Notes: Structure probing data (DMS and 2A3) for a 207-nucleotide construct. Values cover nucleotides 27 to 156. DMS adducts were read by reverse transcription with MarathonRT. It was measured as part of the RMDB library RNAMAK. Conditions: 150 mM KOAc, 10 mM MgCl2 and 150 mM bicine (pH 8.5), 24 C.

[RMDB]
RNA sequence: GGGAACGACUCGAGUAGAGUCGAAAAUUCGAUUAUUCGUAAUCGAAAGAGUUGAUAUGGACAGUUGCUAGGACAGGUGGCGCUCGGAAACGAGGAAGCCAUAUUGGUCCUUGGACCAACUGUCCUAAGUCCGGAUGCAGUGCCUUCGGGCACUGAAGAAGGAUAUCUCGUUCGCGAGAUAUCCUUCAAAAGAAACAACAACAACAAC
Reactivity to DMS in 0.01 (KOAc 150mM, MgCl2 10mM, bicine 150mM(pH8.5), 24C), signal-to-noise 2, nucleotides 027 to 156: u000u000c020g010a030u000u000a030u000u010c300g000u000a000a010u000c000g000a040a010a160g020a180g030u000u000g010a160u000a150u000g000g000a030c040a050g000u000u020g000c030u000a050g030g010a020c010a100g030g020u020g030g080c000g020c040u000c020g000g000a080a080a190c010g010a030g010g020a070a140g010c000c010a030u010a030u000u000g040g000u000c000c020u000u000g020g000a110c220c000a000a200c030u000g000u000c000c000u000a020a110g010u000c040c000g000g000a230u000g000c030a060g020u000g000c000c000u000u000c300g050g030g010c000a000c000u000g000a030a120
Reactivity to 2A3 in 0.01 (KOAc 150mM, MgCl2 10mM, bicine 150mM(pH8.5), 24C), signal-to-noise 1, nucleotides 027 to 156: u030u010c020g000a010u060u060a110u140u070c130g040u100a040a120u000c000g020a020a060a020g040a020g050u100u230g060a110u120a070u250g000g010a000c010a000g010u020u030g020c030u050a000g000g000a020c000a030g010g090u010g010g000c140g050c020u000c000g020g080a030a100a020c010g000a000g040g110a210a040g020c000c020a010u010a090u020u120g150g010u000c000c010u000u050g020g010a000c080c000a000a000c000u010g000u000c000c000u000a030a010g000u000c030c030g090g000a020u200g040c000a010g000u000g010c000c000u090u110c220g120g020g000c010a010c000u000g010a000a030